[RMDB]
RNA sequence: GGGAACGACUCGAGUAGAGUCGAAAAAACUUUGCAUGAUCGUAAAACAUGCCCGGCUUACCGUGAGCCGCCUUUGAAAGAAAGGUUUACACGGACUCUGUUGCGUUACGCACGUACCUAACUUGUGAAAACGGCAUCUUGUUCGCAAGAUGCCGAACUUAGCAAAAGUGUUCGCACUUUUGCUAAGAAAAGAAACAACAACAACAAC
Reactivity to 2A3 in 0.01 (KOAc 150mM, MgCl2 10mM, bicine 150mM(pH8.5), 24C), signal-to-noise 2, nucleotides 027 to 156: a000a000c090u050u060u030g000c010a000u020g020a150u230c060g060u160a060a060a010a040c010a010u000g000c000c000c000g010g000c010u010u040a050c010c010g010u000g000a000g000c010c000g040c000c000u030u000u010g070a050a040a020g020a000a010a040g010g030u040u060u010a020c000a000c000g030g000a010c070u100c040u110g150u120u050g020c020g040u040u120a040c170g020c020a010c020g010u050a080c010c040u040a110a150c070u120u090g070u070g150a040a020a030a050c000g000g010c000a000u000c000u000u010g020u020u050c130g000c090a000a000g000a010u000g000c010c000g000a000a000
Reactivity to DMS in 0.01 (KOAc 150mM, MgCl2 10mM, bicine 150mM(pH8.5), 24C), signal-to-noise 1, nucleotides 027 to 156: a060a040c020u010u000u000g010c000a070u000g000a090u000c090g010u000a090a070a050a100c020a040u000g020c020c090c050g000g020c000u010u020a080c000c020g010u000g000a090g010c000c020g000c000c000u000u000u000g010a180a120a210g000a050a080a020g000g000u010u020u000a190c040a060c020g000g020a200c130u000c100u000g010u000u000g000c020g000u000u000a130c100g000c070a060c100g000u000a050c050c120u010a110a040c030u000u010g020u000g000a060a040a030a100c040g010g000c000a000u000c000u000u000g000u000u010c300g040c020a000a050g000a020u010g000c000c000g020a000a000